[RMDB]
Conditions: 150 mM KOAc, 10 mM MgCl2 and 150 mM bicine (pH 8.5), 24 C.
Chemical mapping of a 177-nucleotide RNA with 2A3 and DMS.
For DMS the reverse transcriptase was MarathonRT.
High 2A3 reactivity points to a flexible backbone, as in loops and unpaired stretches.
The 2A3 profile rests on 89,752 reads.
In probing experiments dimethyl sulfate is read out at A N1 and C N3, which are open when not base-paired.
The data come from the RNA Mapping Database (RMDB), library OK2TST.

RNA sequence: GGGAACGACUCGAGUAGAGUCGAAAAGCCUCGCCUGCCUCGACAGCAUCGUCGUGGACACCCAAGACGCCCAGCCGCUCUACGCCAAGAUCAUGACAUUCUUCGAGGGCAUGGGCAUGCGGCUGCCCACAUUCUAUAUGUUCGCAUAUAGAAUGUGAAAAGAAACAACAACAACAAC
Reactivity to 2A3 in 0.01 (KOAc 150mM, MgCl2 10mM, bicine 150mM(pH8.5), 24C), signal-to-noise 9, nucleotides 027 to 126: g010c000c010u010c030g020c010c030u050g020c010c010u030c020g030a030c020a070g070c030a140u100c090g030u010c010g010u030g020g030a060c020a080c040c020c010a020a030g090a030c070g030c010c020c020a020g040c030c030g040c020u020c020u060a090c050g040c050c020a050a030g030a090u110c040a090u150g070a080c020a110u100u070c030u070u050c050g030a070g040g060g000c030a060u080g020g000g010c010a000u050g000c020g010g000c010u030g010c010c000
Reactivity to DMS in 0.01 (KOAc 150mM, MgCl2 10mM, bicine 150mM(pH8.5), 24C), signal-to-noise 9, nucleotides 027 to 126: g010c010c010u000c070g010c030c020u000g010c020c010u000c040g000a050c170a100g010c120a120u000c130g010u000c020g030u000g010g000a100c100a100c050c030c030a110a100g010a100c120g010c040c040c020a060g000c070c050g000c020u000c030u000a070c100g010c070c050a050a160g010a050u010c060a060u010g010a090c120a110u000u000c030u000u000c050g000a130g000g010g010c030a060u000g000g000g010c060a030u000g010c070g010g000c020u000g010c040c030